[RMDB]
RNA sequence: GGGAACGACUCGAGUAGAGUCGAAAAGAUAUGGAGACCCGUAGGGAGCGUGAUCGGAAACGAUACGCGAGGAUCUACAGGGUCUCCUAAGUCAAAACCUUUCCGUUGGUUCGCCAACGGAAAGGAACCAUGAUCUAUUCUUCGGAAUAGAUCAUGGAAAAGAAACAACAACAACAAC
Reactivity to 2A3 in 0.01 (KOAc 150mM, MgCl2 10mM, bicine 150mM(pH8.5), 24C), signal-to-noise 3, nucleotides 027 to 126: g020a040u060a050u170g000g000a010g000a000c010c010c000g000u010a010g000g040g010a020g000c020g020u110g270a080u010c010g000g010a060a060a040c020g010a010u020a020c010g020c000g030a160g020g000a020u020c010u040a020c150a230g000g000g000u000c000u000c000c000u000a000a000g000u000c010a000a020a080a160c000c000u010u000u000c010c000g000u000u010g050g050u050u080c300g040c110c010a000a000c000g010g000a000a000a000g000g000a000a000
Reactivity to DMS in 0.01 (KOAc 150mM, MgCl2 10mM, bicine 150mM(pH8.5), 24C), signal-to-noise 4, nucleotides 027 to 126: g000a040u000a300u000g000g000a010g010a010c000c000c000g010u000a010g020g000g010a040g020c000g030u000g010a020u000c000g000g010a130a080a190c010g010a010u000a020c010g010c010g000a060g010g000a020u010c010u010a000c000a140g030g010g010u000c000u000c000c000u000a000a050g010u000c050a090a070a110a140c010c000u000u000u000c000c000g000u000u000g000g000u000u000c260g010c010c000a010a020c000g000g000a000a000a000g000g010a020a060